[RMDB]
RNA sequence: GGGAACGACUCGAGUAGAGUCGAAAAACGUGUAGGAAGGCGUGAAGGUAACGUAGAAGCUUGAAUGUGAAUUCGAGUGGAGUUGUCUUUAGUGCAGAUCUUGAUGGUAGUAGCAAAUAUUCAAAAGAAUUUACUUUGAAGGCCGAAGUGGGGAAGGGGAUUUGCUCUAGUUCGCUAGAGCAAAUCCAAAAGAAACAACAACAACAAC
Reactivity to 2A3 in 0.01 (KOAc 150mM, MgCl2 10mM, bicine 150mM(pH8.5), 24C), signal-to-noise 1, nucleotides 027 to 156: a010c050g010u060g000u010a030g020g010a050a010g000g000c040g060u100g020a020a010g000g040u030a060a020c020g100u230a070g000a030a000g000c010u010u020g040a020a010u060g040u010g050a090a040u070u040c030g000a020g020u070g000g060a020g000u000u000g020u010c000u020u040u020a060g020u040g080c030a020g000a040u040c040u040u080g020a050u070g020g020u020a040g000u040a020g020c030a000a010a100u200a110u160u140c050a110a040a080a000g070a020a110u180u260u070a030c000u110u080u090g030a080a000g000g010c010c010g010a040a000g010u150g040g000g000g020a030a100g060g030
Structure probing data (2A3) for a 207-nucleotide construct. The reactions ran in a buffer of 150 mM KOAc, 10 mM MgCl2 and 150 mM bicine (pH 8.5), at 24 C. Reactivities are given for positions 27 through 156. The 2A3 profile rests on 513 reads. The data come from the RNA Mapping Database (RMDB), library PDB130.